Chemical mapping of a 177-nucleotide RNA with DMS.
RNA sequence: GGGAACGACUCGAGUAGAGUCGAAAAAAAAGAUAUGGAUAAAGGUAAGCCCUUGGAUUUAUACAGCUACCAUAUCGGAAACGAUAUGAUGCUGUAUUGUCAGGGUAUCCUUUAUCCUAAGUCAAAAUCUAAAUUAACGGUUCGCCGUUAAUUUAGAAAAAGAAACAACAACAACAAC
Reactivity to DMS in 0.01 (KOAc 150mM, MgCl2 10mM, bicine 150mM(pH8.5), 24C), signal-to-noise 1, nucleotides 027 to 126: a090a040a220a110g000a030u000a300u010g000g010a010u000a000a000a010g000g010u020a210a260g000c030c000c010u010u000g020g010a040u000u000u000a000u010a010c000a050g000c000u010a100c080c000a020u010a010u000c000g010g000a090a060a250c010g000a000u000a000u000g000a020u000g010c000u000g020u000a000u000u010g000u000c010a070g020g050g020u010a160u000c000c000u000u000u000a000u000c000c000u000a020a070g000u000c060a150a040a080a110
About this RNA: The RNA was probed in 150 mM KOAc, 10 mM MgCl2 and 150 mM bicine (pH 8.5) at 24 C. DMS adducts were read by reverse transcription with MarathonRT.